[RMDB]
RNA sequence: GGGAACGACUCGAGUAGAGUCGAAAAGAUAUGGAAGUAGAAGCUCGAUAAGGAUCUCUCGGAAACGAGAGAAUCCUUUUGACGAGCCUACUUCCUAAGUCAAAAGCCCAAAGUUCGCUUUGGGCAACAUCUCUGAGAAGUUCGCUUCUCAGAGAUGAAAAGAAACAACAACAACAAC
Reactivity to DMS in 0.01 (KOAc 150mM, MgCl2 10mM, bicine 150mM(pH8.5), 24C), signal-to-noise 2, nucleotides 027 to 126: g010a040u010a120u010g010g000a010a000g020u020a000g000a250a290g040c010u020c010g030a110u020a020a000g030g020a050u000c000u000c000u000c000g040g000a020a050a050c010g000a010g020a010g000a000a030u000c000c000u000u000u010u010g010a250c040g010a010g000c000c000u000a000c010u000u000c000c000u000a000a040g000u000c030a090a120a130a180g010c000c010c000a000a000a000g000u000u010c300g020c000u000u000u000g020g000g000c000a020a080
Reactivity to 2A3 in 0.01 (KOAc 150mM, MgCl2 10mM, bicine 150mM(pH8.5), 24C), signal-to-noise 2, nucleotides 027 to 126: g000a000u000a000u040g000g000a000a000g000u010a010g060a300a140g030c000u000c020g260a300u180a300a020g010g000a010u030c000u000c000u000c020g000g080a010a010a010c000g010a000g000a000g000a020a000u010c000c000u000u000u030u080g040a060c020g000a000g040c010c000u000a000c010u020u000c000c000u000a010a000g000u000c010a040a030a150a200g010c000c000c000a010a010a000g020u060u180c290g030c180u000u000u000g010g000g040c000a000a010